[RMDB]
RNA sequence: GGGAACGACUCGAGUAGAGUCGAAAAGGAGGUGUCUCCCCACCAGGAGGCACAGGUAUCAGGGACCCACUUAAGGAGGCAGUCUGUCCGUUAGCAGAGCUCAAGCACUGUGCUGGGAGAUCUGUUGGGGUGAUUAAGCAUUCGUGCUUAAUCACCCAAAAGAAACAACAACAACAAC
Reactivity to DMS in 0.01 (KOAc 150mM, MgCl2 10mM, bicine 150mM(pH8.5), 24C), signal-to-noise 1, nucleotides 027 to 126: g010g010a160g000g020u000g010u000c000u000c000c000c020c070a190c270c230a150g000g000a020g000g000c000a010c010a040g030g010u000a070u020c120a120g020g000g010a120c010c000c010a070c140u000u000a130a070g000g000a150g000g000c080a030g010u000c000u000g020u000c020c000g000u000u000a040g000c030a010g010a010g040c010u000c030a080a010g000c050a210c130u010g000u010g020c000u000g000g030g000a020g000a040u000c010u000g000u000u000g010
Reactivity to 2A3 in 0.01 (KOAc 150mM, MgCl2 10mM, bicine 150mM(pH8.5), 24C), signal-to-noise 1, nucleotides 027 to 126: g120g040a060g040g030u020g000u020c000u000c010c010c000c010a060c000c040a020g000g000a020g020g030c010a010c000a020g130g060u060a060u150c060a000g010g000g020a130c000c000c000a040c100u090u060a050a080g090g010a040g140g000c020a020g030u020c020u030g070u000c020c030g040u060u070a010g000c000a000g020a000g040c010u060c080a060a030g000c020a070c130u250g080u180g120c010u080g040g150g000a020g020a010u020c000u010g030u040u070g040